[RMDB]
RNA sequence: GGGAACGACUCGAGUAGAGUCGAAAAAACCAGUCAGACAUGGCGGUGCGUGCCUGCAAUCCCAGGCACUUGGCAGGCUGAGGCAGGAGAAUCAGGUAGGGAGGUUGCAGUGAGUAGAGAUGGUGGCAAGGGGACUGAGAUUCGUCUCAGUCCCCUUAAAAGAAACAACAACAACAAC
Reactivity to DMS in 0.01 (KOAc 150mM, MgCl2 10mM, bicine 150mM(pH8.5), 24C), signal-to-noise 1, nucleotides 027 to 126: a070a040c020c010a110g040u000c070a020g010a130c150a090u020g020g010c000g000g010u010g010c130g000u000g030c010c000u000g020c150a060a090u010c060c090c010a050g000g020c030a030c010u010u000g050g020c120a060g010g000c040u020g020a100g030g030c080a060g000g000a090g010a130a080u000c080a060g000g000u020a040g010g020g000a040g000g010u000u000g030c090a060g020u000g000a080g000u000a070g010a040g020a020u000g000g030u000g000g020c100